[RMDB]
RNA sequence: GGGAACGACUCGAGUAGAGUCGAAAAGAAAACUACCGGUUGGUAUGUGAGCUACUAGCUGGGACUGUGAUAAAUUCACAGUGUACGAAGCCGAAGCUCACCUUCGGUGAGUGAAGAAAGAAAGAAACCCUUCUAUUUAGUUCGCUAAAUAGAAGGGAAAAGAAACAACAACAACAAC
Reactivity to DMS in 0.01 (KOAc 150mM, MgCl2 10mM, bicine 150mM(pH8.5), 24C), signal-to-noise 8, nucleotides 027 to 126: g000a080a040a130a080c060u020a060c000c000g010g010u020u010g010g010u030a050u030g010u020g010a020g010c110u000a080c110u030a080g000c000u000g000g010g010a040c000u000g010u000g000a030u010a070a090a140u030u000c000a000c000a010g000u000g030u030a070c070g010a100a100g000c020c070g010a130a090g000c060u000c050a030c060c040u010u010c030g000g010u010g000a070g010u010g000a070a090g000a080a070a070g010a060a100a100g010a100a100a120
Reactivity to 2A3 in 0.01 (KOAc 150mM, MgCl2 10mM, bicine 150mM(pH8.5), 24C), signal-to-noise 8, nucleotides 027 to 126: g060a000a060a010a010c040u060a040c000c000g110g020u060u050g050g020u090a100u200g070u050g020a010g020c010u020a030c010u030a020g000c000u020g010g030g040a000c000u010g000u000g010a020u090a240a190a110u080u010c000a000c000a000g010u020g040u080a060c040g070a100a010g010c000c010g030a020a000g000c030u010c030a040c010c000u030u040c030g040g020u110g050a050g040u090g050a020a030g060a050a090a010g140a040a080a010g080a070a070a030